RNA sequence: GGGAACGACUCGAGUAGAGUCGAAAAGAUAUGGACUCGAAGAUCCUUGGAUUUAGAAAUAUGUCGGAAACGACAUACACUUGUCAGGAUUCAAGAGUCCUAAGUCAAAGACAUCUUCGGAUGUCAACUCCCACCUAGAGUUCGCUCUAGGUGGGAGAAAAGAAACAACAACAACAAC
Reactivity to 2A3 in 0.01 (KOAc 150mM, MgCl2 10mM, bicine 150mM(pH8.5), 24C), signal-to-noise 1, nucleotides 027 to 126: g040a010u110a060u190g000g020a000c010u030c030g150a170a080g000a040u030c010c030u060u190g170g020a070u300u230u240a050g110a000a190a010u080a000u020g010u000c000g020g010a020a060a050c010g000a010c010a000u020a020c050a020c010u010u060g030u060c040a010g010g020a030u120u010c010a010a020g000a000g000u000c000c000u000a010a030g030u010c020a030a040a040g000a000c000a010u000c000u080u070c300g170g000a000u030g000u000c010a000a030
Reactivity to DMS in 0.01 (KOAc 150mM, MgCl2 10mM, bicine 150mM(pH8.5), 24C), signal-to-noise 1, nucleotides 027 to 126: g000a070u000a300u050g000g000a000c000u000c000g040a300a260g010a000u000c000c000u000u000g010g000a000u000u010u000a010g000a040a110a300u000a000u000g010u000c000g000g000a150a140a180c000g000a050c000a000u000a000c270a210c030u000u000g000u000c060a000g000g030a000u000u000c030a070a300g000a100g000u000c000c000u000a000a070g010u010c010a060a060a170g010a000c010a000u000c000u000u000c190g000g000a000u000g000u000c000a040a140